This 177-nucleotide RNA was probed chemically with 2A3 and DMS. Values cover nucleotides 27 to 126. Conditions: 150 mM KOAc, 10 mM MgCl2 and 150 mM bicine (pH 8.5), 24 C.
[RMDB]
RNA sequence: GGGAACGACUCGAGUAGAGUCGAAAAUAAAGCGAAUGAUUAGAGGCCUUGGGGUUGAAACAACCUUAACCUAUUCUCAAACUUUAAAUAUGUAAGAAGCCCUUGUUACUUAAGUGAACGUGGGCAUGUUUUACGUCAUGUUCGCAUGACGUAAAACAAAAGAAACAACAACAACAAC
Reactivity to 2A3 in 0.01 (KOAc 150mM, MgCl2 10mM, bicine 150mM(pH8.5), 24C), signal-to-noise 2, nucleotides 027 to 126: u050a020a030a000g040c050g030a060a040u050g040a050u050u050a050g070a050g070g040c030c050u060u030g090g000g010g000u000u010g070a240a130a050c050a010a000c010c000u000u020a030a040c030c010u000a020u050u000c020u000c000a100a170a140c030u050u140u090a080a130a260u300a130u260g040u080a010a100g080a030a000g020c010c000c000u000u060g020u030u030a230c050u160u110a150a230g130u140g300a000a000c050g040u040g000g000g000c020a010u000
Reactivity to DMS in 0.01 (KOAc 150mM, MgCl2 10mM, bicine 150mM(pH8.5), 24C), signal-to-noise 1, nucleotides 027 to 126: u080a000a030a000g000c090g010a170a110u000g000a070u000u000a050g010a170g020g010c180c230u000u020g000g000g030g010u000u020g000a210a090a220c050a050a040c030c000u000u020a060a180c000c010u000a000u000u000c020u050c100a040a060a130c050u000u000u010a090a050a040u060a090u030g000u030a070a010g000a240a060g000c000c000c000u000u040g000u040u020a090c010u000u010a070a150g010u040g000a080a000c000g000u040g000g010g010c070a000u060